[RMDB]
RNA sequence: GGGAACGACUCGAGUAGAGUCGAAAAGAUAUGGAUGUCAUCGAGGGAGUCCAUCAACGUUGAUCAGGGAUCGGAAACGAUCCCUGGGAGUUGAUAGACUCCCUAAGACAGUGACAUCCUAAGUCAAAACACAAACGUGCUUCGGCACGUUUGUGAACAAUUUAGUUAUCUUCGGAUAACUAAAUUGAAAAGAAACAACAACAACAAC
Reactivity to DMS in 0.01 (KOAc 150mM, MgCl2 10mM, bicine 150mM(pH8.5), 24C), signal-to-noise 2, nucleotides 027 to 156: g000a120u000a210u030g000g010a020u000g000u000c000a020u010c010g010a060g030g010g000a090g010u000c000c010a010u000c010a000a010c010g000u010u000g010a070u000c010a050g000g010g010a010u000c010g010g010a150a120a280c010g020a010u000c000c000c000u000g000g020g000a020g000u000u030g000a050u000a020g010a010c000u000c000c000c000u000a020a020g000a110c300a060g010u000g030a040c000a010u010c000c020u000a000a070g020u000c030a090a060a130a190c050a000c000a000a000a020c000g040u030g000c000u000u020c300g080g000c020a010c000g000u000u000u000g010u000g000a040a130
Reactivity to 2A3 in 0.01 (KOAc 150mM, MgCl2 10mM, bicine 150mM(pH8.5), 24C), signal-to-noise 2, nucleotides 027 to 156: g030a010u060a030u120g010g000a000u000g010u000c010a030u090c060g020a010g000g010g000a010g020u010c020c010a000u010c000a000a010c010g220u300u020g010a010u010c000a000g000g000g010a000u000c000g000g000a050a080a020c000g000a000u000c000c000c000u000g000g000g000a000g010u010u000g000a000u000a000g000a000c000u000c010c000c000u000a000a000g000a000c010a000g000u010g010a000c000a000u010c000c000u000a090a010g020u010c040a030a020a100a130c010a000c000a020a000a000c000g000u010g000c010u050u110c260g060g000c000a000c000g000u000u000u000g000u000g000a000a010
Notes: This 207-nucleotide RNA was probed chemically with DMS and 2A3. The DMS profile rests on 4,958 reads. The 2A3 profile rests on 4,839 reads. Source: RMDB library RNAMAK, as collected in RNAgym.